Source: RMDB library RFM100, as collected in RNAgym.
Chemical mapping of a 177-nucleotide RNA with DMS and 2A3.
For 2A3, 797 sequencing reads were counted.
The reactions ran in a buffer of 150 mM KOAc, 10 mM MgCl2 and 150 mM bicine (pH 8.5), at 24 C.
RNA sequence: GGGAACGACUCGAGUAGAGUCGAAAAGACGAGCUGCGAGCAAAGAUGUGCCCCGGGACCCCCGGCACCUUCCAGUGGAUUUCCUUGCGGAAAGGAUGUUGGCGGUCCCUGUGACCUGUGGAGACACGGGACAAGGUGAUUUCGAUCACCUUGUCCCAAAAGAAACAACAACAACAAC
Reactivity to DMS in 0.01 (KOAc 150mM, MgCl2 10mM, bicine 150mM(pH8.5), 24C), signal-to-noise 1, nucleotides 027 to 126: g020a090c050g020a180g000c060u000g000c020g000a100g000c010a180a100a140g050a060u000g000u000g050c000c000c010c140g000g020g090a000c000c000c010c000c000g030g000c000a000c070c010u000u010c000c000a140g070u020g020g000a300u000u000u000c080c000u050u000g000c000g000g010a090a000a090g000g000a220u000g000u000u010g000g080c300g020g000u000c000c000c000u060g000u080g000a140c030c020u060g060u000g000g000a080g000a170c000a010c180
Reactivity to 2A3 in 0.01 (KOAc 150mM, MgCl2 10mM, bicine 150mM(pH8.5), 24C), signal-to-noise 2, nucleotides 027 to 126: g020a000c000g000a000g000c020u200g080c000g000a000g000c030a020a130a000g060a060u110g070u180g110c000c010c000c010g000g020g000a030c000c000c000c000c000g000g010c000a000c000c000u000u010c000c000a100g040u090g060g030a080u030u030u210c000c000u060u140g060c090g040g020a080a000a050g000g040a240u000g000u040u020g010g000c010g000g000u020c000c000c000u000g000u070g050a050c020c050u050g000u040g060g030a080g000a050c050a000c090